[RMDB]
RNA sequence: GGGAACGACUCGAGUAGAGUCGAAAAAAGAGUUUCUCUGUUCUCUAAAAUACAAACAGAGUGGUGGAGUCAUUAUGACCCUCUUAGAGUUUCCAGUUUCUCUAAAAAACUGGUGGCGAGCCUGCUCAAAAUCAUUAGACCUUCGGGUCUAAUGAAAGAAGGUGAUAACGUUCGCGUUAUCACCUUCAAAAGAAACAACAACAACAAC
Reactivity to 2A3 in 0.01 (KOAc 150mM, MgCl2 10mM, bicine 150mM(pH8.5), 24C), signal-to-noise 1, nucleotides 027 to 156: a000a000g020a020g000u020u000u020c000u010c000u000g030u030u000c000u010c000u050a150a120a120a020u130a150c110a020a000a000c000a000g000a000g010u000g020g050u080g000g060a300g020u050c040a060u040u300a070u300g020a020c000c010c000u010c000u100u140a040g000a000g000u000u000u000c010c010a000g010u000u020u030c020u020c020u060a040a070a040a000a000a000c000u000g000g000u000g000g040c000g000a020g060c010c110u080g050c020u050c080a040a080a070a080u030c000a010u010u000a010g000a000c020c000u020u060c260g090g010g000u000c000u000a000a000u000g040a030a000a020
Annotation:
This 207-nucleotide RNA was probed chemically with 2A3.